RNA sequence: GGGAACGACUCGAGUAGAGUCGAAAAUCUGUGUCCAGCGAUCCUGAGCAUGGAACUGUUUCUCUUCACGGAGGGGCUGCUUCUGUGUCUCGGUUGAUUGCUGGACAGUUCGACGACUUAAGGAGCCCAGGAAGAUUCAAUUCGUUGAAUCUUCCUGAAAAGAAACAACAACAACAAC
Reactivity to DMS in 0.01 (KOAc 150mM, MgCl2 10mM, bicine 150mM(pH8.5), 24C), signal-to-noise 4, nucleotides 027 to 126: u040c150u020g020u010g010u000c000c000a010g000c000g010a010u010c010c000u010g000a020g020c020a010u000g010g010a010a020c000u000g000u000u000u000c010u000c000u000u000c290a170c300g010g000a020g000g000g000g000c000u000g010c200u000u000c000u020g000u000g000u050c000u000c010g000g000u010u040g010a010u000u000g010c000u010g000g000a010c000a010g000u000u000c030g000a090c020g010a060c010u000u000a070a060g000g010a200g000c030c050
Reactivity to 2A3 in 0.01 (KOAc 150mM, MgCl2 10mM, bicine 150mM(pH8.5), 24C), signal-to-noise 9, nucleotides 027 to 126: u090c050u090g150u030g030u070c000c000a000g000c000g010a000u010c000c000u010g000a000g000c000a000u010g010g000a000a000c000u000g000u000u010u000c010u000c000u070u170c150a060c130g020g000a000g000g000g010g010c000u010g010c030u000u000c000u010g060u010g180u110c010u000c010g000g000u060u180g010a000u000u000g000c000u000g000g000a000c000a000g000u000u000c010g010a010c000g020a040c010u030u030a060a030g060g000a020g030c010c010